[RMDB]
RNA sequence: GGGAACGACUCGAGUAGAGUCGAAAAGAUAUGGACGGUGUGUUGGGACAACAGCUCGGAAACGAGACAUGUCCUUACACCCGUCCUAAGUCAAAGACUCAAUCUUGCUUCGGCAAGAUUGAGUCAACCAAAGUUUACUGUUCGCAGUAAACUUUGGAAAAGAAACAACAACAACAAC
Reactivity to DMS in 0.01 (KOAc 150mM, MgCl2 10mM, bicine 150mM(pH8.5), 24C), signal-to-noise 5, nucleotides 027 to 126: g000a040u000a300u000g000g010a000c000g010g000u010g030u000g000u000u000g000g010g010a020c010a030a060c260a170g030c000u000c000g010g010a080a080a230c000g000a020g010a030c100a160u000g000u000c000c000u010u000a010c000a010c010c010c010g000u000c000c000u000a010a070g000u000c030a120a110a120g000a010c000u000c000a000a000u000c000u000u000g000c010u000u010c200g020g010c000a000a000g000a000u000u000g010a000g010u000c000a020a090
Reactivity to 2A3 in 0.01 (KOAc 150mM, MgCl2 10mM, bicine 150mM(pH8.5), 24C), signal-to-noise 3, nucleotides 027 to 126: g020a020u070a030u130g010g000a010c010g000g030u130g000u000g000u300u000g020g000g010a000c010a130a030c040a130g040c010u010c010g020g030a080a070a040c010g000a000g020a010c020a050u080g000u010c000c000u000u010a000c000a000c000c000c010g000u000c000c010u000a020a000g000u020c020a040a040a090g010a010c000u010c010a000a010u000c000u010u010g010c000u040u090c300g150g000c000a000a000g000a000u010u000g000a000g000u000c000a000a000